[RMDB]
RNA sequence: GGGAACGACUCGAGUAGAGUCGAAAAUUAAUCCGGCUUUAAGUUGACGAGGGCAGGGUUUAUCGAGACAUCGGCGGGUGCCCUGCGGUCUUCCUGCGACCCUUAGAGGACUGGUAAACCAAUUUAAUGUCGUACUAAGUUUCGACUUAGUACGACAAAAAGAAACAACAACAACAAC
Reactivity to DMS in 0.01 (KOAc 150mM, MgCl2 10mM, bicine 150mM(pH8.5), 24C), signal-to-noise 2, nucleotides 027 to 126: u000u010a060a070u000c020c020g020g050c020u000u000u000a060a060g020u000u000g010a090c120g010a080g000g020g020c040a070g000g000g030u000u010u000a060u010c000g020a140g010a110c210a050u010c080g030g050c080g030g000g000u010g010c040c000c050u000g010c040g020g000u000c050u000u000c020c050u010g000c040g010a130c030c010c010u010u010a090g020a080g030g000a110c050u000g010g010u000a040a050a170c020c020a070a110u010u000u000a050a160
Description: Structure probing data (DMS) for a 177-nucleotide construct. It was measured as part of the RMDB library M2PK90. Reactivities are given for positions 27 through 126. Values are in units of 0.01, from 0 to 300, in steps of 10.